[RMDB]
RNA sequence: GGGAACGACUCGAGUAGAGUCGAAAAGCCGACUGGACGUGCGUGCGAGCAGUUUUCGAAAUCGCACGUUUCACGUAAAGACCCAACUCUACUCGAUGCGAGGGUCAGCAAGCAAGCAGCAAUAAAAUAGAGUUAGUUUAUUCGUAAACUAACUCUAAAAAGAAACAACAACAACAAC
Reactivity to DMS in 0.01 (KOAc 150mM, MgCl2 10mM, bicine 150mM(pH8.5), 24C), signal-to-noise 7, nucleotides 027 to 126: g010c050c050g010a090c040u000g000g000a020c000g020u000g010c000g010u000g000c010g010a030g010c200a150g000u000u000u010u000c090g000a060a110a120u000c010g000c000a010c010g000u000u000u000c010a010c100g010u000a030a080a080g000a090c050c100c010a100a040c010u000c010u000a000c010u000c000g010a020u010g010c040g010a120g010g010g010u000c020a070g000c040a040a060g010c040a060a070g010c030a050g010c080a070a070u000a040a040a070a120
Reactivity to 2A3 in 0.01 (KOAc 150mM, MgCl2 10mM, bicine 150mM(pH8.5), 24C), signal-to-noise 5, nucleotides 027 to 126: g040c020c010g040a060c050u060g030g000a000c010g010u000g000c000g010u010g010c020g020a030g070c090a120g060u060u060u150u220c050g040a110a100a130u030c000g000c000a000c010g010u010u030u010c000a000c010g010u020a030a030a060g030a030c010c000c010a010a020c000u000c000u020a010c010u000c010g010a040u080g010c030g020a060g000g020g010u020c010a010g010c010a030a030g020c010a030a020g000c000a010g020c030a060a060u140a170a090a040a040

Chemical mapping of a 177-nucleotide RNA with DMS and 2A3. The reactions ran in a buffer of 150 mM KOAc, 10 mM MgCl2 and 150 mM bicine (pH 8.5), at 24 C.